This 177-nucleotide RNA was probed chemically with 2A3 and DMS. 2A3 adducts were read by reverse transcription with SuperScript II with manganese. The data come from the RNA Mapping Database (RMDB), library OK1LIB.
RNA sequence: GGGAACGACUCGAGUAGAGUCGAAAACAGACUCGAGCGAAAGCUCGGCGAAAGCCGCGUACAUGUGACCGUCGGCUCGUGUACAGUCGACAGUUACUCUUCGGAGUAACAAUAGAAACAACAACAAAGCCAUUAUCAUGUUCGCAUGAUAAUGGCUAAAAGAAACAACAACAACAAC
Reactivity to 2A3 in 0.01 (KOAc 150mM, MgCl2 10mM, bicine 150mM(pH8.5), 24C), signal-to-noise 4, nucleotides 027 to 126: c020a010g060a030c000u020c030g000a010g000c020g050a090a030a000g000c000u010c010g000g000c000g050a100a050a010g100c050c020g020c000g030u040a020c030a090u100g070u080g140a170c030c030g170u160c060g040g000c000u020c010g030u050g040u070a040c050a010g010u000c020g020a010c010a010g000u000u000a000c000u000c010u020u080c210g080g000a000g000u000a000a000c010a000a000u120a030g070a050a130a020c070a040a000c010a030a000c030a100a150
Reactivity to DMS in 0.01 (KOAc 150mM, MgCl2 10mM, bicine 150mM(pH8.5), 24C), signal-to-noise 3, nucleotides 027 to 126: c050a170g020a070c020u000c000g070a010g060c000g000a120a090a110g020c000u000c000g020g000c000g030a150a130a100g000c110c000g000c050g100u010a050c030a030u020g050u000g010a090c030c010g040u010c060g000g000c010u000c030g000u020g010u000a050c100a000g000u000c000g030a070c170a130g000u000u000a020c000u010c000u030u040c130g000g000a010g000u040a000a010c000a050a130u030a070g010a100a080a080c160a070a130c180a050a040c240a040a150